[RMDB]
RNA sequence: GGGAACGACUCGAGUAGAGUCGAAAACGGUUAUAGAGAACUUGCCAUUGGGUCAUUGGUGGUUCCACUUGAUUUUGAGCGUGCCAGAAUCGCACUGCAAGGCAAGAGCAUCAAGAGAGAGCCAGUCAUGAAUUGAUCACUUCGGUGAUCAAUUCAUAAAAGAAACAACAACAACAAC
Reactivity to DMS in 0.01 (KOAc 150mM, MgCl2 10mM, bicine 150mM(pH8.5), 24C), signal-to-noise 2, nucleotides 027 to 126: c120g000g000u000u010a110u000a100g000a160g000a050a130c040u000u010g010c000c010a150u010u010g000g000g030u010c050a090u000u010g020g020u000g000g020u010u020c050c030a200c060u010u010g000a060u000u010u010u000g010a190g020c060g010u010g000c020c090a080g020a060a080u000c100g020c040a030c020u010g010c040a080a070g000g030c060a010a050g000a070g010c060a080u000c030a050a050g000a130g000a140g000a070g000c030c020a080g000u010c090
Reactivity to 2A3 in 0.01 (KOAc 150mM, MgCl2 10mM, bicine 150mM(pH8.5), 24C), signal-to-noise 2, nucleotides 027 to 126: c060g040g050u160u060a130u200a180g120a010g010a060a010c030u050u120g050c060c030a040u040u100g100g010g030u120c030a040u020u080g050g020u030g020g040u130u000c030c010a060c040u040u130g000a070u060u000u080u210g100a060g010c020g010u000g000c000c020a060g120a100a100u110c060g000c050a120c090u110g040c030a050a030g040g020c050a020a010g010a020g160c020a010u080c030a050a000g090a050g030a000g000a030g060c000c000a030g070u110c020

The record gives the reactivity of an RNA of 177 nucleotides to DMS and 2A3. For DMS, 1,662 sequencing reads were counted. For 2A3 the reverse transcriptase was SuperScript II with manganese.